[RMDB]
RNA sequence: GGGAACGACUCGAGUAGAGUCGAAAAGUUGCGACCUUCGGGUCGCAACAAAUACCGAGGUACAUGCUCGGUAGAAAGUACAAACCCUUGGAAACAAGGGAAAAAGCUUAACCUUCGGGUUAAGCAACCAUAUAUCGGAGUUCGCUCCGAUAUAUGGAAAAGAAACAACAACAACAAC
Reactivity to DMS in 0.01 (KOAc 150mM, MgCl2 10mM, bicine 150mM(pH8.5), 24C), signal-to-noise 4, nucleotides 027 to 126: g000u000u000g000c000g000a020c000c010u000u010c200g030g020g030u000c010g020c010a010a000c010a030a090a100u000a010c000c000g000a010g000g030u000a130c230a110u000g000c010u000c000g010g020u000a000g000a050a070a120g010u010a090c080a150a060a060c000c000c010u000u000g010g000a190a110a170c000a010a000g010g000g010a000a000a020a050a160g010c000u000u000a000a000c000c000u000u020c150g030g020g010u000u000a000a000g000c000a030a000
Reactivity to 2A3 in 0.01 (KOAc 150mM, MgCl2 10mM, bicine 150mM(pH8.5), 24C), signal-to-noise 2, nucleotides 027 to 126: g000u000u010g000c010g020a010c000c010u020u070c250g070g010g020u020c000g010c000a000a000c000a000a000a000u010a000c000c010g010a000g020g060u270a170c060a180u270g050c000u000c010g000g010u000a000g010a000a040a010g110u110a070c070a030a080a130c010c000c000u000u000g010g000a040a050a010c010a000a000g000g000g000a000a060a010a000a000g000c010u010u000a000a000c000c000u030u040c260g080g000g000u000u000a000a010g000c000a000a000